[RMDB]
Chemical mapping of a 207-nucleotide RNA with 2A3 and DMS. The 2A3 profile rests on 8,588 reads.
RNA sequence: GGGAACGACUCGAGUAGAGUCGAAAAGCGCAGCAUUUUGAAGCGCUGCGAGGUGUGGGAUUUGAACAUGCUCGACUCGUCCAGCACCACGGCAUCGAACGGCCAUUUCGUUUUGAAAUGCUCGCACAGCCACGCGAUGUUAUCGACGCUGACCGUGUACUUUUCCUGUAUUCGUACAGGAAAAGUAAAAAGAAACAACAACAACAAC
Reactivity to 2A3 in 0.01 (KOAc 150mM, MgCl2 10mM, bicine 150mM(pH8.5), 24C), signal-to-noise 9, nucleotides 027 to 156: g030c020g030c070a020g000c010a040u030u060u040u170g060a070a010g020c040g000c070u040g040c080g040a100g010g030u070g020u080g040g040g010a070u090u130u170g060a140a060c080a120u190g060c060u080c080g060a050c040u020c030g020u010c010c010a010g010c020a010c020c020a030c040g020g000c010a070u100c120g070a080a100c070g040g000c010c000a010u040u100u030c030g060u070u020u010u080g010a010a010a000u000g000c020u010c040g000c010a060c030a040g050c030c010a040c060g010c010g010a030u050g070u300u200a100u140c020g030a040c030g020c020u020g020a080c010c010g050u050g040
Reactivity to DMS in 0.01 (KOAc 150mM, MgCl2 10mM, bicine 150mM(pH8.5), 24C), signal-to-noise 3, nucleotides 027 to 156: g000c030g020c050a070g000c030a090u000u000u000u000g010a130a140g040c080g030c040u000g020c080g000a080g010g020u010g040u000g020g020g000a120u000u010u000g010a060a100c090a100u000g020c070u000c040g020a120c040u010c020g010u000c020c110a110g010c010a050c030c010a080c060g010g010c030a080u000c060g010a100a120c100g000g000c110c030a140u010u000u000c030g040u010u010u010u020g010a010a040a040u000g010c040u030c060g010c030a100c050a070g020c000c020a040c140g000c020g010a070u000g010u000u010a110u010c000g010a070c030g020c050u000g000a040c020c020g020u000g010

Source: RMDB library OK3TST, as collected in RNAgym.
2A3 adducts were read by reverse transcription with SuperScript II with manganese.